[RMDB]
RNA sequence: GGGAACGACUCGAGUAGAGUCGAAAAGACUAGCGAGAUCGUUGGUGUGUGUGGUAGAGGAGAUGCACACACACGUAUGCGGAUACGCUUUUUUUUUUUUUCUCCUCUUUUUGAUCGAAGCUAGUCAGGGAAAUCAUUACUUCGGUAAUGAUUUCCCAAAAGAAACAACAACAACAAC
Reactivity to 2A3 in 0.01 (KOAc 150mM, MgCl2 10mM, bicine 150mM(pH8.5), 24C), signal-to-noise 2, nucleotides 027 to 126: g000a010c000u000a000g000c010g000a030g000a020u010c150g070u070u260g100g010u000g000u000g030u000g060u010g030g060u120a050g000a020g080g000a000g000a080u280g000c000a000c000a000c000a000c000a000c000g050u020a180u190g080c080g090g090a050u150a160c000g000c000u030u000u020u020u070u000u000u000u000u000u150u000u000c000u000c020c000u000c000u040u090u050u080u090g000a000u000c000g020a070a000g010c000u040a000g010u020c000a000